[RMDB]
RNA sequence: GGGAACGACUCGAGUAGAGUCGAAAAGUAGUGAGGCAACGUCGUCUACGACGUUCCACUAUGAAGCGGUCGGCAGGCUUUGGAUGUACGUGGACGAUGUAGAGUCUGCACGACAUGAGCAGGCAUGCCGGCAAGCAUCGUUCGCGAUGUUUGCCGGAAAAGAAACAACAACAACAAC
Reactivity to DMS in 0.01 (KOAc 150mM, MgCl2 10mM, bicine 150mM(pH8.5), 24C), signal-to-noise 2, nucleotides 027 to 126: g010u000a040g000u010g000a120g000g010c110a040a040c000g040u000c000g030u030c120u010a050c010g020a020c000g020u000u010c030c000a050c100u000a060u000g000a140a100g000c090g000g020u000c050g020g000c070a020g000g000c040u000u010u010g010g000a030u010g010u040a040c030g000u010g000g000a070c030g020a060u000g010u030a090g000a090g000u000c000u020g000c020a170c040g000a090c140a060u000g030a300g000c080a110g000g030c170a250u090g010
Reactivity to 2A3 in 0.01 (KOAc 150mM, MgCl2 10mM, bicine 150mM(pH8.5), 24C), signal-to-noise 2, nucleotides 027 to 126: g020u020a000g000u000g090a070g080g080c110a010a010c010g020u000c000g030u030c080u150a100c050g000a000c020g020u000u030c000c000a030c010u050a050u090g040a030a020g060c050g050g040u050c020g000g030c020a030g040g000c000u030u040u080g060g020a050u010g050u080a060c020g070u070g060g080a030c050g030a020u080g120u130a020g000a010g030u000c000u000g010c060a160c010g060a000c020a100u250g030a000g000c050a020g170g000c040a030u210g000